[RMDB]
RNA sequence: GGGAACGACUCGAGUAGAGUCGAAAAGGUCCCAGCCUCCCCGUCGGCGCCGGCCGGGCAACAUUCCGAGGGGACCGUCCCUCGGUAAUGGCGAAUGGGACCCAGAAAUCUCCUUUGAUUCCCAAAGCUUACACUUUCUCUUCGGAGAAAGUGUAAGAAAAGAAACAACAACAACAAC
Reactivity to DMS in 0.01 (KOAc 150mM, MgCl2 10mM, bicine 150mM(pH8.5), 24C), signal-to-noise 1, nucleotides 027 to 126: g000g000u000c000c010c010a190g000c120c020u030c070c040c000c110g000u000c030g000g000c070g030c150c070g000g000c070c020g040g000g020c030a140a150c030a010u010u000c010c000g000a010g030g020g000g000a080c250c200g000u010c000c000c000u000c000g010g010u000a010a010u010g040g020c090g010a140a140u000g000g000g050a030c030c030c060a050g000a050a160a090u000c070u000c080c000u000u010u010g010a150u000u000c000c000c010a090a110a160g010
Structure probing data (DMS) for a 177-nucleotide construct.
It was measured as part of the RMDB library VIROID.